The data come from the RNA Mapping Database (RMDB), library OK2TST. Structure probing data (DMS) for a 177-nucleotide construct.
RNA sequence: GGGAACGACUCGAGUAGAGUCGAAAAAAAGUUUAAGCCUCUAAAUCACACAAAGUACAACACCAAAGAUGUUAUGUGCCAAUACAUCAGAAAUCUGCAAAAGGAAGAGAAGAAUGGAAGAUGACUGCUACUGAAUUGCUUUCGAGCAAUUCAGUAGAAAAGAAACAACAACAACAAC
Reactivity to DMS in 0.01 (KOAc 150mM, MgCl2 10mM, bicine 150mM(pH8.5), 24C), signal-to-noise 1, nucleotides 027 to 126: a050a040a090g030u000u030u010a120a140g000c070c030u000c030u010a030a070a010u010c040a080c050a080c040a070a100a020g020u000a050c060a070a060c090a040c020c050a070a100a020g000a040u010g000u000u000a040u000g030u000g040c020c070a080a070u010a060c060a040u000c050a090g020a070a110a050u000c040u000g030c090a030a010a070a070g010g000a040a050g020a110g000a060a020g030a020a000u020g000g000a030a050g000a070u020g010a040c090u010g020
In probing experiments dimethyl sulfate is read out at A N1 and C N3, which are open when not base-paired.